[RMDB]
RNA sequence: GGGAACGACUCGAGUAGAGUCGAAAACUGGGCAAGCUGCACAUGGUGAACCUCGCGGCGUCAGAGCUGGCAGAAAAGGAGGGCGACAGAUCCCUGCGCGCCCUUGGCAGCUGCCUCCAGGCGCUGCGUUACUGACUAGAUUCGUCUAGUCAGUAACAAAAGAAACAACAACAACAAC
Reactivity to DMS in 0.01 (KOAc 150mM, MgCl2 10mM, bicine 150mM(pH8.5), 24C), signal-to-noise 9, nucleotides 027 to 126: c090u010g010g000g010c040a060a120g010c060u000g020c060a080c080a070u010g010g010u000g010a100a120c060c030u000c080g010c020g010g010c010g020u000c030a080g010a110g020c070u000g000g000c010a030g000a030a030a070a300g010g000a010g000g010g010c000g010a120c030a030g000a120u010c220c240c010u000g010c080g010c000g010c000c000c010u000u000g000g010c300a080g000c010u010g010c010c000u000c060c050a080g010g000c010g010c010u000g000c030
Reactivity to 2A3 in 0.01 (KOAc 150mM, MgCl2 10mM, bicine 150mM(pH8.5), 24C), signal-to-noise 9, nucleotides 027 to 126: c020u030g000g030g000c040a070a100g060c070u060g020c080a040c030a190u140g060g010u050g070a060a060c010c010u030c070g000c000g010g010c010g010u020c010a010g030a040g150c100u050g020g000c010a010g050a020a200a020a010g140g000a000g000g000g010c000g010a010c000a010g050a160u190c160c080c000u060g010c210g010c000g020c070c000c000u000u010g020g020c010a020g030c000u020g000c000c000u010c010c010a030g010g000c010g000c000u010g000c010